RNA sequence: GGGAACGACUCGAGUAGAGUCGAAAAGGGCCCGCGGGCCGGGCGGGCUCGGGGCGGCCGGGACGAGGAGGGGCGACGACGAGCUGCGAGCAAAGAUGUGCCCCGGGACCCCCGGCACCUUCCAGUGAUUUUGUUGAAAAUUCGUUUUCAACAAAAUAAAAGAAACAACAACAACAAC
Reactivity to DMS in 0.01 (KOAc 150mM, MgCl2 10mM, bicine 150mM(pH8.5), 24C), signal-to-noise 2, nucleotides 027 to 126: g010g020g000c030c000c030g000c090g010g000g050c070c030g010g000g030c080g020g000g010c000u000c020g000g050g030g010c080g000g000c030c040g000g020g000a070c090g000a220g030g020a160g030g000g000g000c020g000a050c060g010a080c030g010a210g000c010u010g010c140g020a160g020c050a030a090a110g000a120u010g000u020g020c010c000c000c000g010g010g010a130c150c010c000c000c010g010g000c000a020c000c010u000u000c020c030a120g000u040g010
Reactivity to 2A3 in 0.01 (KOAc 150mM, MgCl2 10mM, bicine 150mM(pH8.5), 24C), signal-to-noise 2, nucleotides 027 to 126: g030g000g040c000c000c000g050c040g010g040g000c020c000g000g060g000c130g000g010g000c010u010c010g010g000g000g000c090g070g000c100c010g020g010g010a050c060g020a060g050g040a060g000g020g000g030c060g040a050c010g010a020c010g010a030g030c020u090g060c070g090a090g030c050a120a130a000g060a080u120g020u070g030c000c000c000c000g010g010g000a030c000c000c000c000c000g000g010c000a030c000c000u010u050c020c020a040g020u020g080

Chemical mapping of a 177-nucleotide RNA with DMS and 2A3. Source: RMDB library RFM100, as collected in RNAgym. For DMS, 3,160 sequencing reads were counted.